Chemical mapping of a 207-nucleotide RNA with 2A3.

RNA sequence: GGGAACGACUCGAGUAGAGUCGAAAAGGGGUCACGUCAGGGAUCGAGGUCUCGGAGGCUGAAGCCUCCACGGCUACCCACCCGAGACUACCCACCGAUCUAGACGUGACGGAGGCACCCAAACCAGAGUAUUGUCCUUCGGGACAAUACUCUGGAACUAUUUCCGAAUCUUCGGAUUCGGAAAUAGAAAAGAAACAACAACAACAAC
Reactivity to 2A3 in 0.01 (KOAc 150mM, MgCl2 10mM, bicine 150mM(pH8.5), 24C), signal-to-noise 1, nucleotides 027 to 156: g060g020g020g010u010c000a000c000g000u030c020a040g190g110g020a000u020c020g040a010g040g020u030c000u000c000g010g000a050g060g000c120u130g120a100a020g080c010c020u060c120c160a090c070g000g010c010u040a090c020c050c040a030c000c000c000g000a000g000a000c010u060a080c110c120c020a000c030c050g010a000u000c010u000a020g000a000c000g000u000g000a000c020g000g030a000g040g030c060a060c050c020c040a060a020a070c020c000a010g000a000g000u000a020u000u000g000u000c010c000u060u110c190g050g020g000a000c000a000a000u000a010c000u010c000u000g000g000a000a000
For 2A3 the reverse transcriptase was SuperScript II with manganese.